Chemical mapping of a 177-nucleotide RNA with DMS. The RNA was probed in 150 mM KOAc, 10 mM MgCl2 and 150 mM bicine (pH 8.5) at 24 C.
[RMDB]
RNA sequence: GGGAACGACUCGAGUAGAGUCGAAAAAAAAAAGAUAUGGAGUAUCCACUCCAUAGGGAGGAUUCUCUUCGGAAACGAAGAGAAAUCCAUCGAUCUAUGGAAAUACGAUACUCCUAAGUCAAAAAAACAAGAUUGAUUAGUUCGCUAAUCAAUCUUGAAAAGAAACAACAACAACAAC
Reactivity to DMS in 0.01 (KOAc 150mM, MgCl2 10mM, bicine 150mM(pH8.5), 24C), signal-to-noise 1, nucleotides 027 to 126: a000a090a140a060a210a110g000a010u020a300u030g000g030a010g000u020a000u010c010c080a200c170u000c000c000a000u000a000g030g000g020a000g000g000a030u010u000c010u010c000u000u000c000g000g000a050a130a180c000g000a070a000g000a010g000a000a030a060u000c000c000a300u010c200g010a010u010c010u000a000u000g000g000a030a050a130u000a130c220g000a020u000a010c010u000c000c000u000a000a100g000u000c000a000a000a100a130a080a070a150